[RMDB]
RNA sequence: GGGAACGACUCGAGUAGAGUCGAAAAUGUGACAUGUUCGCAUGUCACAAGCCAGGUAGUUCCUAUCUCAAUUACCAGUACAGGCCAUGGUCUGGAUAGGAAAGCUCUACCUAUUCGUAGGUAGAAACACAAACCUAUGGUUCGCCAUAGGUUUGUGAAAAGAAACAACAACAACAAC
Reactivity to 2A3 in 0.01 (KOAc 150mM, MgCl2 10mM, bicine 150mM(pH8.5), 24C), signal-to-noise 2, nucleotides 027 to 126: u040g010u000g000a000c010a020u000g020u040u130c280g000c100a010u000g000u020c000a000c010a000a000g040c010c000a040g050g120u090a040g060u060u020c000c010u000a030u000c100u020c040a060a300u160u120a080c000c020a020g050u100a070c020a120g110g110c040c010a070u110g000g040u030c040u020g010g000a000u010a010g000g000a040a020a010g030c010u020c010u020a010c000c000u000a010u000u080c170g060u000a010g000g000u000a010g050a020a120a000
Reactivity to DMS in 0.01 (KOAc 150mM, MgCl2 10mM, bicine 150mM(pH8.5), 24C), signal-to-noise 2, nucleotides 027 to 126: u010g000u000g000a000c000a020u000g020u010u010c210g020c010a000u010g010u000c000a010c010a030a080g000c030c030a140g010g030u000a070g000u000u010c000c000u000a010u010c000u010c140a090a090u010u000a040c020c020a080g020u030a140c140a070g000g020c050c060a090u000g030g000u010c290u000g020g020a010u000a010g040g000a030a040a100g000c150u000c010u000a010c000c000u000a040u000u000c150g010u000a010g000g000u000a000g000a020a090a180